[RMDB]
RNA sequence: GGGAACGACUCGAGUAGAGUCGAAAAGCGAGACCUUCGGGUCUCGCAAAAACCGUAGGCGUCCCGAGAGCGAUAAGAUGCCACUUCGAAAGAGGUGGACAUCUUUUGACGCUCGGCGGACGCCUAAACGGAAAAAAUCGGCUAUUCGUAGCCGAAAGUCAAAAGAGUGAUUCGUCACUCUUUUGACAAAAGAAACAACAACAACAAC
Reactivity to DMS in 0.01 (KOAc 150mM, MgCl2 10mM, bicine 150mM(pH8.5), 24C), signal-to-noise 1, nucleotides 027 to 156: g000c010g010a030g030a020c000c020u000u010c300g050g060g030u000c000u000c010g000c020a010a020a080a080a040c010c020g040u010a020g000g010c010g020u010c000c020c010g030a230g010a040g030c030g010a170u000a030a040g000a040u000g010c000c000a010c000u010u000c010g010a270a080a250g010a030g000g030u000g010g050a050c000a000u020c000u000u010u000u000g020a070c000g040c000u000c010g020g030c070g020g020a020c000g020c000c000u010a000a010a010c010g000g020a000a090a100a000a150a220u020c010g000g000c000u000a030u000u030c260g000u000a010g000c010c000g000a000a010a090
Record summary:
Source: RMDB library RNAMAK, as collected in RNAgym. Chemical mapping of a 207-nucleotide RNA with DMS. The reactions ran in a buffer of 150 mM KOAc, 10 mM MgCl2 and 150 mM bicine (pH 8.5), at 24 C. The DMS profile rests on 2,683 reads.